[RMDB]
RNA sequence: GGGAACGACUCGAGUAGAGUCGAAAAUUGAACACGUUGGACAAGCCCACACUCAAACCUAAUGUGUACUGGAGAAAGUAUAACAUGACCAUGCAUUCAUACACAUAUGCAUGUGUAGAUGCUAAAUAAAUGCAUGUGUAGUAACUCACAUGCAAAACCACGCACUCCUAUUCGUAGGAGUGCGUGGAAAAGAAACAACAACAACAAC
Reactivity to 2A3 in 0.01 (KOAc 150mM, MgCl2 10mM, bicine 150mM(pH8.5), 24C), signal-to-noise 1, nucleotides 027 to 156: u050u000g010a000a000c100a010c180g000u000u050g030g050a000c000a080a150g010c000c000c000a000c000a020c000u010c020a000a010a090c010c030u180a160a000u020g000u000g020u030a040c000u000g020g000a250g240a140a140a000g080u050a060u020a140a020c020a060u020g030a070c090c030a010u060g090c000a000u100u250c030a010u180a040c050a000c000a010u100a080u300g170c070a060u080g000u000g000u000a040g000a030u040g000c000u000a060a010a190u200a030a030a030u020g000c000a000u000g000u040g000u120a010g070u020a000a080c030u000c000a010c000a000u000g010c000a010a010a010a010
Overview:
Structure probing data (2A3) for a 207-nucleotide construct. For 2A3, 409 sequencing reads were counted. 2A3 adducts were read by reverse transcription with SuperScript II with manganese. The RNA was probed in 150 mM KOAc, 10 mM MgCl2 and 150 mM bicine (pH 8.5) at 24 C.